[RMDB]
Background:
The data come from the RNA Mapping Database (RMDB), library 15KREP. The record gives the reactivity of an RNA of 177 nucleotides to 2A3 and DMS. For 2A3, 1,626 sequencing reads were counted. The DMS profile rests on 1,199 reads. The RNA was probed in 150 mM KOAc, 10 mM MgCl2 and 150 mM bicine (pH 8.5) at 24 C. Values cover nucleotides 27 to 126.

RNA sequence: GGGAACGACUCGAGUAGAGUCGAAAAUGCCUUUGGGAUAUGUGUCUCAUGGUUUAGACUUAAUGCAAGCAGGGAGUGUCGUGCGUAGAGUUAACGUGCCCUACGUGUGUCUCCUAGCUAAUAAAGACGAUACGAUUCUGUUCGCAGAAUCGUAUCGAAAAGAAACAACAACAACAAC
Reactivity to 2A3 in 0.01 (KOAc 150mM, MgCl2 10mM, bicine 150mM(pH8.5), 24C), signal-to-noise 2, nucleotides 027 to 126: u060g000c000c000u100u070u040g000g030g000a050u090a090u260g300u130g010u020c000u000c010a020u010g030g020u000u060u080a050g020a040c020u030u090a130a030u240g120c060a040a030g000c000a030g000g030g000a010g010u090g060u180c030g000u010g000c000g030u000a000g000a000g010u050u030a160a040c140g060u150g010c000c000c010u000a000c010g000u000g000u000g000u010c000u000c000c000u000a020g000c000u010a040a030u090a070a170a010g090a050
Reactivity to DMS in 0.01 (KOAc 150mM, MgCl2 10mM, bicine 150mM(pH8.5), 24C), signal-to-noise 2, nucleotides 027 to 126: u010g000c020c010u000u000u050g010g000g020a030u000a070u020g030u010g000u000c000u010c000a060u000g020g020u000u000u010a060g000a200c060u000u020a120a090u000g020c190a070a010g010c010a300g010g000g010a020g010u010g010u000c010g030u000g000c040g020u020a010g000a010g000u000u000a090a140c300g010u000g000c000c010c010u000a000c020g020u010g010u010g000u020c020u010c000c000u000a160g040c010u010a050a110u010a040a120a130g020a230